An RNA of 177 nucleotides, treated with DMS and read out base by base.
Values cover nucleotides 27 to 126.

[RMDB]
RNA sequence: GGGAACGACUCGAGUAGAGUCGAAAAAGAUUGGCCGCGCUACCGCGCUGGCCGAAGGCACCGGCGCAGCGAUCGCGCCCGCCGAGGGUGCUCGAGCCUUCCAGACGCUGCUUCGCUACGGCCGGGCGUAAAUCAAGGCUUUCGAGCCUUGAUUUACAAAAGAAACAACAACAACAAC
Reactivity to DMS in 0.01 (KOAc 150mM, MgCl2 10mM, bicine 150mM(pH8.5), 24C), signal-to-noise 1, nucleotides 027 to 126: a110g000a100u000u000g000g030c000c060g020c020g000c050u030a160c300c300g000c010g020c010u010g060g020c010c000g010a030a020g000g010c010a120c040c000g000g010c050g010c020a000g010c000g000a020u000c060g000c020g000c030c010c040g020c250c190g010a050g000g020g010u000g020c160u030c180g000a150g010c000c010u000u020c010c000a060g000a030c020g010c000u000g000c080u000u000c030g030c000u000a120c000g000g040c020c030g000g000g000c030